[RMDB]
RNA sequence: GGGAACGACUCGAGUAGAGUCGAAAACGGCACGGUACGAUUCCGUGGGGGAAUUUCCCUAACGCUUAGUCCCUAUACCGUAAAGGCCAUUACUGUAUAGGGCGUUGCCAACUACGAAAGUGUCGGGCCAGCUAGAUUAGUUCGCUAAUCUAGCUGGAAAAGAAACAACAACAACAAC
Reactivity to 2A3 in 0.01 (KOAc 150mM, MgCl2 10mM, bicine 150mM(pH8.5), 24C), signal-to-noise 2, nucleotides 027 to 126: c030g150g010c010a000c010g000g040u150a060c100g100a170u180u050c000c020g010u020g000g030g000g040g050a070a160u060u050u050c010c010c000u030a080a010c070g040c180u140u140a030g060u070c000c000c010u000a000u000a000c000c020g000u010a000a010a000g090g000c000c030a040u060u020a010c010u010g010u000a000u000a000g020g000g000c000g000u000u010g000c000c000a020a010c000u000a020c010g050a230a000a000g000u000g000u000c000g000g000g000
Reactivity to DMS in 0.01 (KOAc 150mM, MgCl2 10mM, bicine 150mM(pH8.5), 24C), signal-to-noise 2, nucleotides 027 to 126: c130g000g030c020a000c030g020g010u010a050c280g000a250u000u010c030c010g010u000g020g000g020g010g020a160a140u000u000u000c010c000c000u020a090a050c220g020c170u010u000a090g030u000c000c000c000u000a010u000a000c000c040g010u000a000a040a160g020g000c200c130a120u000u000a010c000u000g020u000a000u000a000g000g000g000c000g000u000u000g000c020c010a050a030c010u020a030c000g000a010a150a010g000u000g000u000c040g000g010g020
An RNA of 177 nucleotides, treated with 2A3 and DMS and read out base by base. The reactions ran in a buffer of 150 mM KOAc, 10 mM MgCl2 and 150 mM bicine (pH 8.5), at 24 C. For 2A3, 2,832 sequencing reads were counted. For DMS the reverse transcriptase was MarathonRT. Reactivities are given for positions 27 through 126.